[RMDB]
RNA sequence: GGGAACGACUCGAGUAGAGUCGAAAAAGUGGAUAGUACGCUAUCCACACGCUCGCGGCGGGGCCGCCUUAAGUGUCCGCCGCUCAUUUGCCCCCAAUUCGGGGGUAGCCGGUAUACGUACCGGCAAGGGUUUAAGUCACUUCGGUGACUUAAACCCAAAAGAAACAACAACAACAAC
Reactivity to 2A3 in 0.01 (KOAc 150mM, MgCl2 10mM, bicine 150mM(pH8.5), 24C), signal-to-noise 1, nucleotides 027 to 126: a110g000u000g000g000a020u000a020g020u070a020c150g020c150u000a000u000c080c000a000c020a000c070g170c040u110c070g000c000g080g000c060g000g040g020g000c090c020g050c040c000u300u200a110a050g020u100g030u090c000c000g000c000c090g030c000u000c000a000u060u070u080g000c020c000c000c000c010a000a290u250u300c140g010g000g000g010g000u000a020g000c000c000g000g010u000a040u000a000c260g020u000a010c010c010g020g060c000a000a000